About this RNA: Structure probing data (2A3 and DMS) for a 207-nucleotide construct. It was measured as part of the RMDB library OK3TST. For 2A3, 994 sequencing reads were counted. DMS adducts were read by reverse transcription with MarathonRT. Conditions: 150 mM KOAc, 10 mM MgCl2 and 150 mM bicine (pH 8.5), 24 C.

[RMDB]
RNA sequence: GGGAACGACUCGAGUAGAGUCGAAAAAGUUCUCGCGCGUCAAGCAGAGCUUCUAGUGUCGGAUCGCGAAGCAGAAACAACUCGGGCUCUAGAACACCUACCUCUGGUGUGACACCUGACAUGGCAGAUCAAAUUGCUAGUCUUGUUCUGGCUAAGCGAAUAGUCGGUCAUUCGUGACCGACUAUUCAAAAGAAACAACAACAACAAC
Reactivity to 2A3 in 0.01 (KOAc 150mM, MgCl2 10mM, bicine 150mM(pH8.5), 24C), signal-to-noise 2, nucleotides 027 to 156: a010g010u070u000c020u020c040g020c040g020c010g060u110c080a080a020g000c020a020g040a030g000c020u140u000c050u090a060g000u030g020u030c100g040g030a140u070c000g010c050g110a090a090g020c070a080g070a030a200a000c040a040a090c030u010c070g040g000g040c000u000c010u060a030g050a050a020c010a020c040c000u070a070c040c080u210c130u110g000g090u020g030u020g020a010c020a030c070c010u030g000a020c010a140u070g020g000c030a050g000a090u130c040a070a130a120u110u040g010c000u020a030g020u030c000u020u090g000u030u020c070u000g000g030c000u030a040a040g060c010
Reactivity to DMS in 0.01 (KOAc 150mM, MgCl2 10mM, bicine 150mM(pH8.5), 24C), signal-to-noise 1, nucleotides 027 to 156: a140g010u000u010c010u000c010g030c030g070c080g040u020c030a080a110g070c070a060g020a030g030c040u000u000c010u010a120g010u000g020u030c030g030g010a050u000c030g030c050g030a130a080g040c080a110g030a170a100a060c010a080a100c050u000c100g060g000g070c030u000c030u000a110g000a100a080c010a000c060c010u010a020c130c300u040c030u000g010g000u000g010u000g010a060c030a090c000c030u000g010a120c060a070u000g010g030c000a060g010a060u060c040a050a060a110u000u000g010c030u000a030g010u000c010u000u000g010u000u010c020u010g010g030c080u010a090a140g010c300